[RMDB]
RNA sequence: GGGAACGACUCGAGUAGAGUCGAAAACAGGCUGGAGCCUGCCUCCGGCACGAGGCCGAGAUCGACAAACGGCGUGCGGAACAGCGCGCGCGGCGUGGCAAAGGUCAGGUCGCAGUGAAAAUGGAUAUAGCACUUUUACUUUCGAGUAAAAGUGCUAAAAAGAAACAACAACAACAAC
Reactivity to 2A3 in 0.01 (KOAc 150mM, MgCl2 10mM, bicine 150mM(pH8.5), 24C), signal-to-noise 2, nucleotides 027 to 126: c020a020g040g000c020u150g090g000a040g040c010c020u000g080c020c000u000c000c000g000g090c000a010c030g020a050g020g090c010c010g300a300g010a160u020c030g060a070c080a040a000a010c000g170g000c000g020u010g000c010g000g100a300a170c080a140g130c140g010c010g060c000g030c010g130g090c000g020u010g020g050c070a160a020a000g030g010u010c010a000g010g050u030c020g000c060a030g020u040g080a080a090a070a150u200g090g020a030u100a010
Reactivity to DMS in 0.01 (KOAc 150mM, MgCl2 10mM, bicine 150mM(pH8.5), 24C), signal-to-noise 3, nucleotides 027 to 126: c030a060g010g020c000u010g010g010a190g010c020c030u000g020c070c020u000c010c020g020g000c000a040c010g010a120g000g000c000c000g010a180g020a030u010c030g010a120c120a140a130a040c010g020g010c000g040u000g000c000g010g000a160a120c170a100g020c160g000c000g010c030g000c000g010g000c060g000u010g000g020c190a080a080a140g030g010u000c010a190g010g020u000c000g000c070a160g010u000g000a010a050a080a070u020g020g020a100u000a140